[RMDB]
RNA sequence: GGGAACGACUCGAGUAGAGUCGAAAAAUUGAUUUGAGACGUCGCCUUGCAGUGUUAACUUGGCUCUCAUGAACCUCUUUGAUCAUCCACAAAGGGUAGGCUACGGGUGAAACCUCUUAGGCUAAAAUCAAUUAUCAAUAUUCGUAUUGAUAAUUGAAAAAGAAACAACAACAACAAC
Reactivity to 2A3 in 0.01 (KOAc 150mM, MgCl2 10mM, bicine 150mM(pH8.5), 24C), signal-to-noise 5, nucleotides 027 to 126: a000u090u110g020a020u090u030u110g060a050g010a010c050g060u060c030g010c000c010u020u050g020c060a050g030u040g040u260u110a070a090c040u020u040g040g010c010u000c000u020c040a050u070g040a040a050c000c000u020c010u040u020u030g050a060u100c050a050u040c030c010a030c020a050a040a020g060g010g000u020a020g050g000c010u030a010c030g020g000g020u070g080a080a040a030c010c010u030c020u040u060a060g080g000c020u050a040a010a010a120
Reactivity to DMS in 0.01 (KOAc 150mM, MgCl2 10mM, bicine 150mM(pH8.5), 24C), signal-to-noise 8, nucleotides 027 to 126: a090u010u010g010a090u000u000u000g000a090g010a070c130g020u000c080g010c030c020u000u010g020c070a060g010u010g010u000u010a060a070c060u000u010g010g010c020u000c040u000c060a080u000g010a100a100c070c020u000c030u000u000u000g010a080u000c060a070u000c060c070a110c060a020a060a060g000g000g010u000a050g010g010c030u000a050c140g000g000g010u000g000a090a070a100c060c010u000c060u000u000a070g010g010c030u000a050a050a060a110
An RNA of 177 nucleotides, treated with 2A3 and DMS and read out base by base. It was measured as part of the RMDB library M2PK90. In probing experiments dimethyl sulfate is read out at A N1 and C N3, which are open when not base-paired. 2A3 adducts were read by reverse transcription with SuperScript II with manganese. The RNA was probed in 150 mM KOAc, 10 mM MgCl2 and 150 mM bicine (pH 8.5) at 24 C. DMS adducts were read by reverse transcription with MarathonRT.